About this RNA
The record gives the reactivity of an RNA of 177 nucleotides to DMS. Source: RMDB library TTRINS, as collected in RNAgym. Values cover nucleotides 27 to 126. For DMS, 1,760 sequencing reads were counted. The RNA was probed in 150 mM KOAc, 10 mM MgCl2 and 150 mM bicine (pH 8.5) at 24 C.
[RMDB]
RNA sequence: GGGAACGACUCGAGUAGAGUCGAAAAGAUAUGGAACACUCUAGGGAUGCAUCGAUCCAAUGCUUCUUAGUCUCGGAAACGAGACUAAGAAGCAUUGGGGAGCAUACCUAGAGGUGUUCCUAAGUCACCUUGUCAUACUGUUCGCAGUAUGACAAGGAAAAGAAACAACAACAACAAC
Reactivity to DMS in 0.01 (KOAc 150mM, MgCl2 10mM, bicine 150mM(pH8.5), 24C), signal-to-noise 1, nucleotides 027 to 126: g010a050u000a300u020g000g000a000a000c010a040c000u000c000u000a010g000g000g010a010u000g010c000a300u000c180g000a060u010c010c000a000a010u000g000c010u000u010c000u010u000a010g000u000c000u010c010g010g000a120a110a200c020g000a000g010a030c010u000a000a000g010a000a010g000c000a000u000u000g000g000g000g000a010g020c000a000u000a040c000c000u010a000g010a000g010g070u010g000u010u000c000c000u000a010a130g010u000c060a250